[RMDB]
RNA sequence: GGGAACGACUCGAGUAGAGUCGAAAAGAUAUGGAGGGCAGCUUUUGACGAAGGCUCGGAAACGAGAGCAACUUCGAUAAGCUGGCCCUCCUAAGUCAAAACCUGAGACACUUCGGUGUCUCAGGAAGAUAACAGAGUAGUUCGCUACUCUGUUAUCAAAAGAAACAACAACAACAAC
Reactivity to DMS in 0.01 (KOAc 150mM, MgCl2 10mM, bicine 150mM(pH8.5), 24C), signal-to-noise 6, nucleotides 027 to 126: g000a040u000a300u000g000g010a010g020g000g020c010a030g010c000u000u000u020u000g020a170c140g000a020a020g000g010c010u010c000g000g000a090a080a170c060g010a040g010a300g000c090a110a110c010u000u010c010g010a140u000a020a010g010c000u000g010g020c000c000c000u010c000c000u010a000a080g000u010c030a100a050a100a130c000c010u010g000a010g000a010c000a000c000u000u010c190g020g010u000g000u010c000u000c000a000g010g000a010a010
Reactivity to 2A3 in 0.01 (KOAc 150mM, MgCl2 10mM, bicine 150mM(pH8.5), 24C), signal-to-noise 5, nucleotides 027 to 126: g020a020u060a040u140g000g010a010g000g010g020c010a000g000c020u120u080u190u300g150a060c010g000a020a000g090g030c000u000c020g020g040a120a120a010c080g010a050g010a010g130c070a160a150c010u020u010c020g090a120u030a140a010g010c000u010g010g000c010c000c000u000c000c000u000a000a000g000u000c010a000a020a060a110c010c000u000g000a000g000a000c020a010c020u090u160c300g140g000u010g000u000c000u000c000a000g000g000a000a010
Overview
The record gives the reactivity of an RNA of 177 nucleotides to DMS and 2A3. 2A3 adducts were read by reverse transcription with SuperScript II with manganese. DMS adducts were read by reverse transcription with MarathonRT. Source: RMDB library TTRDEL, as collected in RNAgym. For 2A3, 12,639 sequencing reads were counted.